[RMDB]
RNA sequence: GGGAACGACUCGAGUAGAGUCGAAAACGACAGUUCGUGCGCGGCGACCUGAAGUUGCUUCGGCUUCUUCUUGUUCGCGUCCUGAGUGGAACUGCUCCUUCUUCACACCAGCCGGAGUAGGAAACUACCCGGAGGAUACAACUCUUGAGCGCCGAGCGAUGGAUUUGGUGUUCGCACCAAAUCCAUCAAAAGAAACAACAACAACAAC
Reactivity to 2A3 in 0.01 (KOAc 150mM, MgCl2 10mM, bicine 150mM(pH8.5), 24C), signal-to-noise 2, nucleotides 027 to 156: c050g080a020c030a040g020u010u060c030g100u210g090c010g000c000g050g070c010g010a010c010c010u020g010a010a010g010u000u000g030c000u050u080c250g130g000c010u040u030c010u010u000c000u000u020g090u240u080c000g000c020g000u090c000c000u070g020a030g000u010g030g030a050a030c020u050g080c010u030c010c000u130u130c020u160u110c080a120c020a050c080c060a060g020c000c000g030g030a200g060u030a000g000g050a140a040a060c000u020a020c000c000c010g000g000a020g000g000a000u060a140c140a120a060c120u030c000u150u230g050a070g050c000g020c020c010g010a020g020c080

An RNA of 207 nucleotides, treated with 2A3 and read out base by base.
Values cover nucleotides 27 to 156.
The reactions ran in a buffer of 150 mM KOAc, 10 mM MgCl2 and 150 mM bicine (pH 8.5), at 24 C.
For 2A3 the reverse transcriptase was SuperScript II with manganese.
The 2A3 profile rests on 1,050 reads.